RNA sequence: GGGAACGACUCGAGUAGAGUCGAAAAGAUAUGGACUCCGGAUACCGAAUCCGGGAUCGGAAACGAUCCGCGGACAUGUGGUAUCGGAGUCCUAAGUCAAACAGUUAAUGGUUCGCCAUUAACUGAAGUAUACCUGCUACUUCGGUAGCAGGUAUACAAAAGAAACAACAACAACAAC
Reactivity to 2A3 in 0.01 (KOAc 150mM, MgCl2 10mM, bicine 150mM(pH8.5), 24C), signal-to-noise 3, nucleotides 027 to 126: g000a000u010a010u020g000g000a000c020u020c030c000g110g070a020u000a030c040c080g300a300a010u000c000c000g020g000g000a000u010c000g000g000a000a000a000c020g000a000u030c050c060g300c040g190g020a010c030a160u300g300u300g040g000u000a000u010c000g000g000a000g000u000c000c000u000a000a000g010u010c000a010a060a190c000a020g000u000u020a000a000u010g020g070u060u130c220g040c090c000a000u020u000a010a000c010u000g010a100a010
Reactivity to DMS in 0.01 (KOAc 150mM, MgCl2 10mM, bicine 150mM(pH8.5), 24C), signal-to-noise 2, nucleotides 027 to 126: g000a020u010a060u000g000g000a010c000u000c000c010g000g010a020u000a020c000c000g010a190a190u000c020c000g000g000g000a010u000c010g020g000a010a040a040c000g010a000u010c000c020g010c000g040g030a020c120a080u000g020u000g010g020u000a000u040c000g010g000a010g000u000c010c000u020a010a040g010u000c010a210a160a280c010a000g010u000u000a000a010u000g000g010u010u040c300g010c010c000a020u000u010a000a000c010u000g020a020a090
Conditions: 150 mM KOAc, 10 mM MgCl2 and 150 mM bicine (pH 8.5), 24 C. Chemical mapping of a 177-nucleotide RNA with 2A3 and DMS. The 2A3 profile rests on 3,706 reads. For DMS, 2,066 sequencing reads were counted. The data come from the RNA Mapping Database (RMDB), library TTRDES.